[RMDB]
RNA sequence: GGGAACGACUCGAGUAGAGUCGAAAAGAUAUGGAGCACAUGGAGCACGAGUGUGCAAUGAUGAGGACUUCUCGGAAACGAGAAGUCCUUUGAGCACACGAGUGCGUUGAAAUGUGCUCCUAAGUCACACGGAUAAUUUCUUCGGAAAUUAUCCGUGAAAAGAAACAACAACAACAAC
Reactivity to DMS in 0.01 (KOAc 150mM, MgCl2 10mM, bicine 150mM(pH8.5), 24C), signal-to-noise 2, nucleotides 027 to 126: g000a070u000a300u000g020g000a020g020c000a000c000a000u000g000g010a130g000c010a020c000g000a300g000u000g010u000g000c000a210a120u000g000a220u010g000a000g010g000a010c000u000u000c000u010c010g000g000a110a100a150c000g010a000g020a020a020g010u000c000c000u000u000u000g010a160g030c010a020c010a000c000g000a300g030u010g010c000g000u000u010g040a090a170a030u000g010u000g000c000u000c000c000u000a010a030g000u000c000a250